[RMDB]
This 207-nucleotide RNA was probed chemically with 2A3. High 2A3 reactivity points to a flexible backbone, as in loops and unpaired stretches. It was measured as part of the RMDB library M2RFPK.
RNA sequence: GGGAACGACUCGAGUAGAGUCGAAAACAACCCAACUCCUACUCAAUACGUCCUCGUCGUGCAGAACGGUAACAUGUUUUCCGAACAUCCGCGCUUGGGUAUACGAGUAUACACCUUACCCAACCCUCCAACCACCUAAAGUUCGCUUUAGGUGGAAGCCACCUAUUCAGUUCGCUGAAUAGGUGGCAAAAGAAACAACAACAACAAC
Reactivity to 2A3 in 0.01 (KOAc 150mM, MgCl2 10mM, bicine 150mM(pH8.5), 24C), signal-to-noise 3, nucleotides 027 to 156: c040a020a060c000c000c030a020a040c030u050c020c020u030a040c000u040c080a050a100u070a140c040g050u070c030c020u050c030g070u010c010g020u070g010c060a030g040a170a030c010g000g000u040a020a030c040a140u160g060u040u040u030u040c020c000g020a060a010c020a080u020c040c000g070c020g050c130u040u030g030g020g030u040a030u020a050c080g020a030g070u010a010u060a040c080a050c030c010u060u050a040c010c010c010a020a030c000c010c000u050c020c010a070a080c020c000a000c010c000u000a000a000a000g030u050u080c100g030c110u000u000u000a000g000g000u000g000g000a000a010